[RMDB]
RNA sequence: GGGAACGACUCGAGUAGAGUCGAAAAAAGCUCAUUUUCGAAUGAGCUUGAAGCGUGAACGCAGGAUAACGCAGAAACGCGCCGCUGAACCUCCCAACCGAAAGAUUAAGGUCUUCGGACCUUAAAACAAGUUACAUCCAUUCGUGGAUGUAACUUGAAAAGAAACAACAACAACAAC
Reactivity to 2A3 in 0.01 (KOAc 150mM, MgCl2 10mM, bicine 150mM(pH8.5), 24C), signal-to-noise 2, nucleotides 027 to 126: a000a000g020c000u010c010a020u000u020u040u070c100g080a020a000u000g010a000g000c000u000u020g010a010a010g020c010g020u060g030a120a020c030g000c030a050g060g070a130u080a190a040c080g000c050a040g100a030a090a020c010g010c010g000c010c000g080c040u040g020a070a060c000c030u010c010c000c010a010a020c030c020g150a170a060a020g100a030u030u030a010a000g010g000u000c000u020u090c170g060g020a010c000c000u030u020a000a010a000a020
Reactivity to DMS in 0.01 (KOAc 150mM, MgCl2 10mM, bicine 150mM(pH8.5), 24C), signal-to-noise 4, nucleotides 027 to 126: a010a010g000c000u000c000a010u000u000u000u010c180g010a040a010u000g010a010g020c000u000u000g000a040a090g040c040g010u000g000a120a130c130g000c030a070g030g000a130u020a100a170c090g030c010a070g000a100a110a090c100g010c030g010c030c030g010c070u000g010a160a130c060c030u000c000c000c000a090a120c190c110g010a060a060a100g010a130u000u000a000a000g010g000u000c000u010u020c210g030g000a000c010c000u000u000a000a010a060a170
The record gives the reactivity of an RNA of 177 nucleotides to 2A3 and DMS. 2A3 adducts were read by reverse transcription with SuperScript II with manganese. Reactivities are rounded to 0.1 and cut off at 0 and 3.